This 177-nucleotide RNA was probed chemically with 2A3 and DMS.
For DMS, 7,697 sequencing reads were counted.
It was measured as part of the RMDB library TTRDES.
The RNA was probed in 150 mM KOAc, 10 mM MgCl2 and 150 mM bicine (pH 8.5) at 24 C.
For 2A3 the reverse transcriptase was SuperScript II with manganese.

RNA sequence: GGGAACGACUCGAGUAGAGUCGAAAAAAAGAUAUGGACCUUCGGGAGAUCUACGUGUCAAUGAUGCAUCGUCGGAAACGACGAUGUUGAGACACGCGGGAUCUUUGAUCGAAGGUCCUAAGUCAAAGCCUAAUUAUUGGUUCGCCAAUAAUUAGGCAAAAGAAACAACAACAACAAC
Reactivity to 2A3 in 0.01 (KOAc 150mM, MgCl2 10mM, bicine 150mM(pH8.5), 24C), signal-to-noise 3, nucleotides 027 to 126: a010a000a010g040a030u080a060u130g000g000a000c000c000u000u000c000g000g040g000a060g000a010u000c010u020a020c010g000u000g000u020c140a300a300u140g020a010u070g040c000a010u000c000g000u010c000g030g030a120a070a060c000g000a010c000g000a000u000g000u000u000g010a020g000a000c000a010c000g000c060g170g000g000a000u020c020u050u060u060g080a060u090c010g010a010a000g010g000u010c000c000u010a020a000g040u000c040a060a080a030
Reactivity to DMS in 0.01 (KOAc 150mM, MgCl2 10mM, bicine 150mM(pH8.5), 24C), signal-to-noise 4, nucleotides 027 to 126: a070a080a120g000a020u000a300u010g000g010a010c010c000u000u000c000g020g000g000a010g000a000u010c000u000a100c010g020u000g020u000c000a180a150u010g000a120u000g000c000a010u000c000g020u000c000g020g000a120a100a160c000g000a010c000g010a000u000g000u000u010g000a110g000a000c000a000c000g000c030g020g020g010a010u000c000u000u010u000g000a110u020c010g010a020a000g000g000u010c000c000u000a000a080g000u000c040a110a100a150